[RMDB]
An RNA of 177 nucleotides, treated with DMS and read out base by base.
RNA sequence: GGGAACGACUCGAGUAGAGUCGAAAAAAAUUUGAAGACAACACUGUUGCAGAUCGCAUCCUAAAGUGGCUGAGCAGUGUAUUCUACUUUGGGGGGCUUGGCAUAAGUUCUGGAAGAGGGGGUGCGGCUUAGAGCACAGGUUCGCCUGUGCUCUAAGAAAAGAAACAACAACAACAAC
Reactivity to DMS in 0.01 (KOAc 150mM, MgCl2 10mM, bicine 150mM(pH8.5), 24C), signal-to-noise 1, nucleotides 027 to 126: a020a060a190u020u000u010g010a120a090g010a040c110a080a040c020a000c040u000g030u000u000g000c000a030g000a070u000c010g000c010a040u010c070c050u000a060a090a080g010u000g020g030c020u000g000a060g000c000a030g000u000g010u000a040u010u000c020u000a050c060u010u000u000g000g000g000g010g020g020c080u000u000g010g010c100a050u000a050a110g010u010u010c060u000g000g000a080a060g000a090g020g000g010g010g030u000g020c100g010g000

For DMS, 1,186 sequencing reads were counted.
Values cover nucleotides 27 to 126.
The RNA was probed in 150 mM KOAc, 10 mM MgCl2 and 150 mM bicine (pH 8.5) at 24 C.
The data come from the RNA Mapping Database (RMDB), library OK2TST.